[RMDB]
RNA sequence: GGGAACGACUCGAGUAGAGUCGAAAAGAAAGAAAGAAAGAAAUCUGACAGAAUGACGGAUUCGAUCGUUGUGGUCGGCGGGUCACCACGUCAUUCCUUCGCACUGUCUCCGGGCAGACCGCCAUAAAAAAGCGGAUCUACUUCGGUAGAUCCGCAAGACGAAUAAGCAGUUCGCUGCUUAUUCGUCAAAAGAAACAACAACAACAAC
Reactivity to 2A3 in 0.01 (KOAc 150mM, MgCl2 10mM, bicine 150mM(pH8.5), 24C), signal-to-noise 2, nucleotides 027 to 156: g070a010a060a020g060a070a050a020g070a070a120a010g060a050a110a010u050c060u080g010a020c040a050g160a160a110u120g040a050c050g030g020a010u100u080c070g040a090u130c020g000u030u030g010u000g040g010u010c030g000g080c050g020g000g000u030c010a000c070c020a020c010g020u010c010a070u060u020c000c000u040u160c030g060c040a030c050u020g010u000c020u030c060c090g010g000g020c010a000g010a050c010c030g020c020c030a050u250a030a140a000a020a000a000g000c020g010g000a000u000c000u000a000c000u020u020c120g020g000u010a030g000a000u000c000c000g000c010a000a000
Conditions: 150 mM KOAc, 10 mM MgCl2 and 150 mM bicine (pH 8.5), 24 C. An RNA of 207 nucleotides, treated with 2A3 and read out base by base. The data come from the RNA Mapping Database (RMDB), library M2RFPK. Reactivities are given for positions 27 through 156.